An RNA of 177 nucleotides, treated with DMS and 2A3 and read out base by base. 2A3 adducts were read by reverse transcription with SuperScript II with manganese. Conditions: 150 mM KOAc, 10 mM MgCl2 and 150 mM bicine (pH 8.5), 24 C. For 2A3, 4,850 sequencing reads were counted.

RNA sequence: GGGAACGACUCGAGUAGAGUCGAAAAUCUGUUUUAAUGUCACUUUUUUUUUCAGUUUGUGUGUGUGAAAUUGAAACGCCGGCUUAGCACACAUUCCGGUUCCGGUUAUGAUAUGGCCCCCAACAACCAAGGACUCUAGGUUCGUUUAGAGUUUUUGAAAAGAAACAACAACAACAAC
Reactivity to DMS in 0.01 (KOAc 150mM, MgCl2 10mM, bicine 150mM(pH8.5), 24C), signal-to-noise 6, nucleotides 027 to 126: u030c030u010g000u010u010u010u020a050a070u010g010u010c050a050c020u000u000u000u000u000u000u000u000u000c030a070g010u010u010u000g010u010g010u000g010u020g000u000g010a040a040a070u010u020g010a070a070a070c160g020c020c020g010g000c090u010u000a140g010c030a030c050a030c030a050u000u010c050c020g010g010u010u010c030c010g000g000u010u020a050u020g000a080u010a060u010g010g010c020c010c000c020c010a050a080c160a050a060c150
Reactivity to 2A3 in 0.01 (KOAc 150mM, MgCl2 10mM, bicine 150mM(pH8.5), 24C), signal-to-noise 6, nucleotides 027 to 126: u050c020u020g100u040u060u050u140a120a080u100g080u080c010a050c030u040u050u020u010u030u020u010u090u100c060a050g030u020u160u070g070u050g010u010g020u000g010u000g080a050a120a150u080u080g030a110a080a000c040g020c010c000g010g020c020u050u080a020g020c010a000c000a000c000a010u040u000c020c020g040g000u040u010c020c000g000g030u060u060a080u110g090a040u040a050u120g050g010c000c000c000c000c000a020a050c010a020a000c070